[RMDB]
RNA sequence: GGGAACGACUCGAGUAGAGUCGAAAAGCCUUGGAUCGAGCGACGGGAUCUUGUUCGCUACCCGUAAAGACAGGCACACCGAUCUGUUCGCCUAAAAUUUCAAGCUGUUUUACGGCGGCAGGGCGACGUUGAGGGUACGGUUCGCCGUACCCUCAACAAAAGAAACAACAACAACAAC
Reactivity to 2A3 in 0.01 (KOAc 150mM, MgCl2 10mM, bicine 150mM(pH8.5), 24C), signal-to-noise 3, nucleotides 027 to 126: g030c020c020u070u110g120g020a160u070c100g020a010g120c040g060a010c010g020g030g020a100u080c030u150u190g070u110u040c050g020c020u050a140c030c000c000g000u040a080a010a000g060a000c040a040g040g000c040a010c020a030c000c010g010a060u030c020u010g040u190u300c000g000c020c020u030a050a040a030a040u120u230u140c130a100a040g120c090u030g010u030u070u040u000a020c060g030g000c000g020g000c010a010g000g020g020c030g010a050c050
Reactivity to DMS in 0.01 (KOAc 150mM, MgCl2 10mM, bicine 150mM(pH8.5), 24C), signal-to-noise 2, nucleotides 027 to 126: g010c010c020u000u000g010g010a090u010c110g010a080g000c010g010a030c020g000g020g000a140u030c110u020u000g010u030u010c040g000c040u000a050c070c020c000g000u010a060a120a160g010a100c140a040g000g030c060a080c120a190c060c030g000a080u020c050u010g020u000u020c020g000c000c000u000a020a030a020a060u010u010u010c260a100a180g020c160u000g000u010u000u000u000a020c170g000g030c030g000g000c040a020g010g010g010c020g010a050c130